An RNA of 177 nucleotides, treated with DMS and 2A3 and read out base by base. Reactivities are given for positions 27 through 126. Source: RMDB libraries RFM100 and RFMREP, as collected in RNAgym. Reactivities are rounded to 0.1 and cut off at 0 and 3. The reactions ran in a buffer of 150 mM KOAc, 10 mM MgCl2 and 150 mM bicine (pH 8.5), at 24 C. As a SHAPE reagent, 2A3 marks flexible, mostly unpaired nucleotides at the ribose 2'-OH.
[RMDB]
RNA sequence: GGGAACGACUCGAGUAGAGUCGAAAAACGGUGCUGUACGCAGCACCGAGGGCUGGGUAUUCACUAGUGAAGGCAACUAACACAGUUAGACGUGCUAGUUGUGCCCACUGGUGUUUAUCCGGUCCAAGUUAAUGUAUAACUUCGGUUAUACAUUAACAAAAGAAACAACAACAACAAC
Reactivity to DMS in 0.01 (KOAc 150mM, MgCl2 10mM, bicine 150mM(pH8.5), 24C), signal-to-noise 9, nucleotides 027 to 126: a150c010g000g010u000g010c000u010g010u010a100c230g030c020a020g000c000a010c000c000g010a030g000g010g000c000u000g000g000g020u000a000u000u000c010a000c000u000a010g020u000g010a150a140g000g000c000a020a010c000u000a000a020c000a010c010a130g010u010u060a160g010a220c190g000u000g010c040u000a000g000u000u000g000u010g010c200c060c000a000c000u000g010g010u000g010u000u000u000a000u000c000c000g000g010u000c010c000a030a040
Reactivity to 2A3 in 0.01 (KOAc 150mM, MgCl2 10mM, bicine 150mM(pH8.5), 24C), signal-to-noise 9, nucleotides 027 to 126: a000c010g000g000u000g000c000u010g030u070a040c280g010c120a000g000c000a000c000c000g000a140g000g000g000c000u000g000g000g000u000a000u000u000c000a000c000u010a000g010u010g040a100a040g090g000c000a000a000c000u010a010a000c000a000c010a050g070u160u190a150g080a170c120g010u000g000c000u000a000g000u010u030g050u110g070c010c010c000a000c000u000g000g000u000g000u000u000u000a000u000c000c000g000g000u000c000c000a000a000